Structure probing data (DMS and 2A3) for a 177-nucleotide construct. For 2A3 the reverse transcriptase was SuperScript II with manganese.
RNA sequence: GGGAACGACUCGAGUAGAGUCGAAAACACGGCACCUGACACACCGCCCACCGCGAUCACUAGGCUCAGGGCGCUUGUGGUCGCCGCGGCCCGGAUCCUAGGCAUUCCGGAGCCGGCCAGGCGCAGGUCCAGUAUGUUGUUUCGACAACAUACUGGAAAAAGAAACAACAACAACAAC
Reactivity to DMS in 0.01 (KOAc 150mM, MgCl2 10mM, bicine 150mM(pH8.5), 24C), signal-to-noise 6, nucleotides 027 to 126: c060a070c080g010g000c070a070c010c020u010g020a080c030a060c060a040c300c030g020c020c000c010a080c110c130g010c060g010a060u030c110a060c070u040a090g010g010c050u000c120a120g010g000g010c060g020c060u000u000g010u000g000g020u020c010g000c030c070g000c000g010g000c010c010c020g010g000a020u010c070c100u010a100g000g010c210a120u030u030c000c010g000g000a080g010c010c020g010g000c060c040a060g010g020c040g020c060a050g010g010
Reactivity to 2A3 in 0.01 (KOAc 150mM, MgCl2 10mM, bicine 150mM(pH8.5), 24C), signal-to-noise 7, nucleotides 027 to 126: c060a010c020g040g010c040a030c030c020u020g040a010c020a000c000a010c060c030g020c000c010c010a030c010c030g030c020g030a060u060c020a030c100u100a040g050g020c030u050c180a080g050g080g000c060g040c030u030u060g020u020g020g030u050c020g000c010c010g030c010g000g000c000c000c000g000g010a030u060c050c100u210a150g150g010c070a070u120u020c000c000g000g000a040g000c000c000g010g000c020c020a090g010g000c010g000c020a010g010g050
The reactions ran in a buffer of 150 mM KOAc, 10 mM MgCl2 and 150 mM bicine (pH 8.5), at 24 C. High 2A3 reactivity points to a flexible backbone, as in loops and unpaired stretches. The DMS profile rests on 11,845 reads. Source: RMDB library OK1LIB, as collected in RNAgym.